An RNA of 177 nucleotides, treated with 2A3 and DMS and read out base by base.
RNA sequence: GGGAACGACUCGAGUAGAGUCGAAAAGCCGUGCUCGAGAGGGAGCAGAAAAUGCAGAGCUAUCCCGUCGUUUCGCUAAACAAAUGCGAAACGACAAAUUGCGUUUCAUACGCAAUCCUCUAAUGAAGAUGAUCUCGUUGUUCGCAACGAGAUCAUCAAAAGAAACAACAACAACAAC
Reactivity to 2A3 in 0.01 (KOAc 150mM, MgCl2 10mM, bicine 150mM(pH8.5), 24C), signal-to-noise 2, nucleotides 027 to 126: g000c010c020g070u070g000c000u000c020g070a040g020a000g050g060g000a000g000c010a000g140a030a230a010a010u220g050c070a010g040a030g050c000u010a040u070c000c000c000g010u010c000g000u020u000u010c000g020c000u030a120a150a230c050a030a080a020u110g000c000g000a000a000a000c000g000a000c000a000a090a000u020u000g000c010g030u020u090u210c140a100u120a140c020g000c010a000a020u000c000c000u080c030u050a060a100u190g080a040a050
Reactivity to DMS in 0.01 (KOAc 150mM, MgCl2 10mM, bicine 150mM(pH8.5), 24C), signal-to-noise 2, nucleotides 027 to 126: g040c020c060g000u000g020c010u000c000g020a060g000a040g010g010g000a030g050c000a050g010a050a040a060a040u040g020c120a080g010a120g040c050u000a230u000c000c000c010g050u000c000g030u000u010u010c000g000c000u010a040a110a140c300a060a070a040u000g010c000g030a000a010a000c000g000a000c040a020a070a020u000u000g000c000g010u000u040u000c170a090u000a000c000g000c020a030a000u000c010c000u020c040u030a170a120u000g000a140a050
Record summary: The RNA was probed in 150 mM KOAc, 10 mM MgCl2 and 150 mM bicine (pH 8.5) at 24 C.